[RMDB]
RNA sequence: GGGAACGACUCGAGUAGAGUCGAAAAGGUUGUCAGGCAUGAGCCAAAUCUAUCCAUGGUGUUGGUGGUACUGAAAUUACCGCGUUUUCGAGGUUUUUCGUCGUGUCAACUUGCGAAGGGAAUUACGCGAGUUGUGAAGGUUCGCCUUCACAACUCGAAAAGAAACAACAACAACAAC
Reactivity to DMS in 0.01 (KOAc 150mM, MgCl2 10mM, bicine 150mM(pH8.5), 24C), signal-to-noise 1, nucleotides 027 to 126: g020g060u000u000g030u000c050a070g000g000c030a030u010g010a170g000c040c010a030a060a040u000c040u000a040u020c090c060a090u030g020g000u030g020u000u020g000g020u000g000g000u000a070c100u000g020a050a100a100u000u000a050c030c000g010c070g040u000u000u000u000c040g000a100g020g030u000u000u020u000u000c020g000u000c050g030u000g000u000c070a010a060c110u010u040g020c040g010a120a050g000g030g000a080a050u000u000a030c070g050
Reactivity to 2A3 in 0.01 (KOAc 150mM, MgCl2 10mM, bicine 150mM(pH8.5), 24C), signal-to-noise 1, nucleotides 027 to 126: g000g030u020u000g040u030c030a000g000g050c020a030u130g030a020g040c040c020a150a000a000u000c010u000a020u000c000c100a070u110g010g030u150g220u090u000g020g000u050g000g000u080a100c100u040g030a020a050a000u130u140a090c000c000g070c110g070u040u000u110u200c050g000a100g010g000u100u000u000u100u000c050g000u000c020g000u000g000u030c020a110a000c060u030u150g030c010g080a040a000g080g000g090a000a100u100u080a170c020g000